[RMDB]
RNA sequence: GGGAACGACUCGAGUAGAGUCGAAAAGACAGUCGAGCAGGACCAGCAGGCCUGCCCACGUGUCAGGACCAGUGGGCCAAGUGAUCUCACAGUGAUGCCCCAGUCAUUUGCAGUGGGGACCGAGGGCACUGUGGGGAGGAUUCGUCCUCCCCACAGUAAAAGAAACAACAACAACAAC
Reactivity to 2A3 in 0.01 (KOAc 150mM, MgCl2 10mM, bicine 150mM(pH8.5), 24C), signal-to-noise 2, nucleotides 027 to 126: g020a000c020a010g060u100c030g060a020g000c000a020g000g090a210c020c000a050g160c060a090g000g070c010c010u020g010c050c010c000a070c100g150u080g000u010c040a010g000g060a040c040c030a040g020u100g060g010g050c030c000a120a040g040u040g090a100u060c060u020c060a020c030a020g030u010g050a080u130g020c000c020c010c000a010g060u040c010a040u080u120u200g040c050a020g030u000g050g050g000g000a010c010c060g010a120g010g020g020c030
Reactivity to DMS in 0.01 (KOAc 150mM, MgCl2 10mM, bicine 150mM(pH8.5), 24C), signal-to-noise 3, nucleotides 027 to 126: g010a030c020a090g010u000c140g010a060g020c040a030g000g010a110c040c050a160g010c230a120g010g010c010c010u000g000c010c000c020a030c070g000u000g000u010c030a090g020g010a100c040c040a090g020u010g010g000g000c010c070a090a120g020u010g010a100u010c070u010c050a030c040a100g020u010g000a090u000g010c000c010c010c020a100g010u010c030a080u010u000u000g000c090a090g020u020g000g010g000g010a040c050c040g000a130g020g010g020c100
This 177-nucleotide RNA was probed chemically with 2A3 and DMS. For DMS the reverse transcriptase was MarathonRT. The data come from the RNA Mapping Database (RMDB), library OK2TST. Conditions: 150 mM KOAc, 10 mM MgCl2 and 150 mM bicine (pH 8.5), 24 C.